[RMDB]
RNA sequence: GGGAACGACUCGAGUAGAGUCGAAAAGCGCCGUGCCGCGCGAUCGGGUGACCGCCCCUCUUCUAAAUUUGGAGCCGGUCAUAGCCGUCUACAAAAAGUGGGCGCGCGGUGAAGGAGGCGCCAAGCUCCCGCCCAUCUCCGAGCGUGAAAAGGCGUGUACUGAUUUUACAUUCGUGUAAAAUCAGUAAAAAGAAACAACAACAACAAC
Reactivity to DMS in 0.01 (KOAc 150mM, MgCl2 10mM, bicine 150mM(pH8.5), 24C), signal-to-noise 1, nucleotides 027 to 156: g020c060g050c010c060g000u010g050c010c000g040c000g030c030g040a070u000c050g010g030g050u010g020a140c010c020g020c000c000c020c050u000c110u020u010c120u010a110a280a200u000u010u010g030g010a030g000c080c030g020g030u000c070a070u020a090g010c000c040g000u010c000u010a300c040a080a090a130a200a210g000u000g020g000g040c020g000c020g080c000g000g030u000g010a060a150g040g010a160g000g020c020g030c010c040a000a120g000c090u000c030c000c000g000c000c000c010a230u010c020u020c040c020g000a080g000c040g000u000g000a040a090a180a120g000g030c020g040u020g060
Reactivity to 2A3 in 0.01 (KOAc 150mM, MgCl2 10mM, bicine 150mM(pH8.5), 24C), signal-to-noise 3, nucleotides 027 to 156: g020c010g020c010c010g040u080g020c000c020g040c010g000c020g010a100u190c040g020g010g000u020g000a000c010c000g030c010c060c020c060u010c050u170u050c060u140a280a300a300u180u100u110g020g000a040g010c110c010g010g010u020c010a010u020a040g120c000c010g020u040c020u040a040c050a050a240a060a050a050g030u090g020g030g000c000g000c000g000c030g020g020u040g020a060a070g060g070a080g000g010c000g000c010c000a010a020g010c010u000c000c010c000g030c000c000c000a090u040c030u020c040c040g120a080g050c040g020u100g050a050a060a000a030g050g000c020g010u070g040

This 207-nucleotide RNA was probed chemically with DMS and 2A3. For 2A3, 1,897 sequencing reads were counted. For 2A3 the reverse transcriptase was SuperScript II with manganese. It was measured as part of the RMDB library OK3TST. The reactions ran in a buffer of 150 mM KOAc, 10 mM MgCl2 and 150 mM bicine (pH 8.5), at 24 C. Values cover nucleotides 27 to 156.